[RMDB]
RNA sequence: GGGAACGACUCGAGUAGAGUCGAAAAGUCCUUUCUGCAUGAGUAGCAGAGGCUGCUGGAACUAGAGCCAUUACAUGGCAAAGCAAGGAUGCUGUCUGGAGCCUCCACCUGAAUAGAGAGGCUGGUAGGCUGAGCUCUCAGCCCCUGCGAGGCUCCAGUGAUCACGAUUAUUCGUAAUCGUGAUCACAAAAGAAACAACAACAACAAC
Reactivity to DMS in 0.01 (KOAc 150mM, MgCl2 10mM, bicine 150mM(pH8.5), 24C), signal-to-noise 1, nucleotides 027 to 156: g050u000c010c000u000u000u000c030u000g030c030a130u000g000a220g040u010a130g040c000a070g020a020g010g020c010u000g020c030u010g010g000a090a120c100u000a110g020a190g000c000c020a100u000u000a100c120a300u000g000g010c000a060a100a100g000c060a090a130g000g040a130u000g000c000u000g030u010c070u000g020g040a020g010c000c000u000c010c020a210c110c030u000g000a170a160u020a240g000a200g000a060g000g020c000u000g010g000u000a070g010g050c030u000g020a130g020c050u000c040u000c000a040g000c010c010c000c010u000g020c030g000a040g030g030c000u000c000c020a050
Reactivity to 2A3 in 0.01 (KOAc 150mM, MgCl2 10mM, bicine 150mM(pH8.5), 24C), signal-to-noise 3, nucleotides 027 to 156: g060u040c020c000u020u110u020c040u020g020c030a080u120g040a100g130u180a020g000c020a030g020a070g070g040c020u050g030c040u050g040g030a070a030c060u060a100g010a050g110c000c000a030u130u150a060c080a160u100g010g000c010a040a080a010g040c020a010a070g040g010a020u080g030c060u030g090u130c020u000g000g000a000g000c000c000u020c010c000a070c000c040u080g070a170a100u180a190g110a020g010a030g080g000c020u050g040g050u050a040g070g000c070u080g060a010g010c000u000c020u000c060a000g000c000c030c000c000u020g050c090g020a000g000g050c000u000c000c010a000
Chemical mapping of a 207-nucleotide RNA with DMS and 2A3. High DMS reactivity at an A or C suggests that its Watson-Crick edge is free. DMS adducts were read by reverse transcription with MarathonRT. For 2A3 the reverse transcriptase was SuperScript II with manganese. The reactions ran in a buffer of 150 mM KOAc, 10 mM MgCl2 and 150 mM bicine (pH 8.5), at 24 C. The DMS profile rests on 1,947 reads.